[RMDB]
RNA sequence: GGGAACGACUCGAGUAGAGUCGAAAAGGUGAGCUGGACGGGAAGUAGUUCCAGCGACUGCUUCCGAAGCUUUGAUAAGAGCAACUCCAUCUACGUUGCUCAAGUAGGUGGUAGCAGCAAACACCGACCGGGUCAGUAGGUUCGCCUACUGACCCGGAAAAGAAACAACAACAACAAC
Reactivity to 2A3 in 0.01 (KOAc 150mM, MgCl2 10mM, bicine 150mM(pH8.5), 24C), signal-to-noise 1, nucleotides 027 to 126: g030g030u010g000a030g000c020u000g000g120a030c090g010g000g060a010a010g000u070a000g000u030u000c030c040a010g010c000g040a000c010u000g000c010u000u000c000c000g000a130a000g000c000u030u040u120g150a170u180a100a070g000a000g000c000a000a040c030u000c010c000a000u000c010u010a030c100g190u150u130g070c040u020c040a010a010g000u000a010g000g060u020g000g030u070a000g130c000a000g000c020a040a040a000c010a020c000c020g000a030
Reactivity to DMS in 0.01 (KOAc 150mM, MgCl2 10mM, bicine 150mM(pH8.5), 24C), signal-to-noise 2, nucleotides 027 to 126: g000g000u010g000a120g000c000u010g000g000a080c140g020g000g000a130a120g010u000a090g060u000u000c000c060a120g000c110g040a120c000u000g000c040u000u000c000c010g000a300a210g000c000u000u000u010g000a100u030a100a040g000a040g000c000a060a190c050u000c140c060a060u040c030u030a100c060g000u030u000g040c020u060c020a010a130g000u090a000g000g000u000g000g010u000a000g000c000a000g150c030a070a010a300c040a010c040c000g110a130

The data come from the RNA Mapping Database (RMDB), library OK1LIB.
An RNA of 177 nucleotides, treated with 2A3 and DMS and read out base by base.
The reactions ran in a buffer of 150 mM KOAc, 10 mM MgCl2 and 150 mM bicine (pH 8.5), at 24 C.
The DMS profile rests on 1,254 reads.